Source information
Structure probing data (2A3 and DMS) for a 177-nucleotide construct. DMS adducts were read by reverse transcription with MarathonRT. For 2A3 the reverse transcriptase was SuperScript II with manganese. Values are in units of 0.01, from 0 to 300, in steps of 10.
[RMDB]
RNA sequence: GGGAACGACUCGAGUAGAGUCGAAAAUAGCGAUCUCUAAUGAGAUCGCGAGUCUAUCCAUCGAAGAGGCUCGACAGAUGGACGACAAGCGAGCCUACAGGAGUCGAGGAAAACUCGACUCCAAAAAGCGGUAUAUAUACUUCGGUAUAUAUACCGCAAAAGAAACAACAACAACAAC
Reactivity to 2A3 in 0.01 (KOAc 150mM, MgCl2 10mM, bicine 150mM(pH8.5), 24C), signal-to-noise 5, nucleotides 027 to 126: u130a010g000c000g000a010u000c000u040c070u210a300a130u300g010a010g000a010u000c000g000c000g000a000g000u000c020u030a110u000c010c030a030u050c030g070a100a060g060a050g130g020c000u010c020g050a070c040a050g050a030u100g040g080a050c030g030a020c000a010a000g050c030g020a010g000c000c010u040a080c040a060g020g010a000g000u000c000g000a000g030g050a040a120a150a140c000u000c000g000a000c000u000c010c000a000a000a000a000a000
Reactivity to DMS in 0.01 (KOAc 150mM, MgCl2 10mM, bicine 150mM(pH8.5), 24C), signal-to-noise 3, nucleotides 027 to 126: u010a140g000c000g000a000u000c010u000c000u030a110a150u030g000a010g000a000u010c000g010c000g000a040g000u020c020u010a210u030c000c030a060u020c020g000a150a090g010a080g000g000c020u000c010g030a110c110a100g010a050u010g000g000a010c300g000a040c140a100a160g000c140g000a030g030c010c000u010a070c210a080g020g000a050g020u000c000g000a040g000g000a130a110a110a090c030u000c000g000a000c010u010c000c000a020a030a030a080a040